Structure probing data (2A3 and DMS) for a 177-nucleotide construct. In probing experiments dimethyl sulfate is read out at A N1 and C N3, which are open when not base-paired. For 2A3 the reverse transcriptase was SuperScript II with manganese.
[RMDB]
RNA sequence: GGGAACGACUCGAGUAGAGUCGAAAACUUACGCGGCCUGCGGAACCCUAAGAGGGGGGCCUGCACGCCGAGGUUAUUUCCCAGCCCUUCGAUGCAUGGUCCCCCCUUAGUGGACUGCAGGCCCAUGAAUUGUAUGUUACUUCGGUAACAUACAAUUAAAAGAAACAACAACAACAAC
Reactivity to 2A3 in 0.01 (KOAc 150mM, MgCl2 10mM, bicine 150mM(pH8.5), 24C), signal-to-noise 9, nucleotides 027 to 126: c020u080u100a060c120g040c170g030g000c000c000u010g000c010g050g020a200a230c000c000c000u000a010a000g070a300g020g000g000g000g000g000c000c000u000g010c000a000c010g020c020c020g010a120g000g010u090u030a120u110u080u040c000c010c000a000g010c000c010c000u040u030c020g240a300u020g000c020a030u300g010g000u010c000c000c000c000c000c000u000u000a000g000u040g020g010a020c000u000g000c000a000g000g000c000c000c000a000u000g010
Reactivity to DMS in 0.01 (KOAc 150mM, MgCl2 10mM, bicine 150mM(pH8.5), 24C), signal-to-noise 7, nucleotides 027 to 126: c030u010u010a080c170g010c140g010g010c000c010u000g010c010g010g000a060a190c000c020c020u010a000a010g010a180g020g000g000g010g010g000c010c000u010g010c000a020c050g000c140c030g000a050g010g010u010u010a090u020u000u000c010c010c010a200g000c050c010c010u000u000c030g010a190u000g010c010a020u020g030g010u000c000c000c000c010c000c000u000u000a000g000u020g010g000a300c000u010g000c010a010g010g000c000c000c010a000u010g010